[RMDB]
RNA sequence: GGGAACGACUCGAGUAGAGUCGAAAAGAUAUGGACGUAUACUUCUUUUGACGACGUUUGGGUCGGAAACGACCCAUACGUCGAUAAGAAGUACGUCCUAAGUCAAACGUCUUGUUCGCAAGACGAACAAUCCAUGUAACUUCGGUUACAUGGAUUGAAAAGAAACAACAACAACAAC
Reactivity to 2A3 in 0.01 (KOAc 150mM, MgCl2 10mM, bicine 150mM(pH8.5), 24C), signal-to-noise 5, nucleotides 027 to 126: g030a010u070a040u150g000g000a000c000g040u070a070u050a300c020u020u010c020u050u140u170u290g300a250c170g000a000c000g010u000u000u040g010g010g010u000c000g000g010a020a050a000c010g010a010c000c000c000a000u000a000c000g010u000c000g000a000u020a000a010g010a000a000g000u010a000c000g010u000c000c000u000a050a010g040u010c040a120a070a120c010g000u000c010u010u070g020u090u080c230g010c160a000a000g000a000c020g020a050a020
Reactivity to DMS in 0.01 (KOAc 150mM, MgCl2 10mM, bicine 150mM(pH8.5), 24C), signal-to-noise 5, nucleotides 027 to 126: g020a040u000a300u000g000g000a020c010g010u000a100u010a070c020u000u000c000u000u000u000u010g020a240c180g010a010c000g020u000u000u010g000g010g020u000c000g010g010a060a060a130c010g010a020c000c000c000a000u000a000c000g020u000c000g010a040u000a010a010g010a010a020g010u000a010c000g010u000c000c000u000a020a100g010u000c030a120a130a260c010g000u000c000u000u000g000u000u020c270g020c010a020a020g000a020c000g020a120a220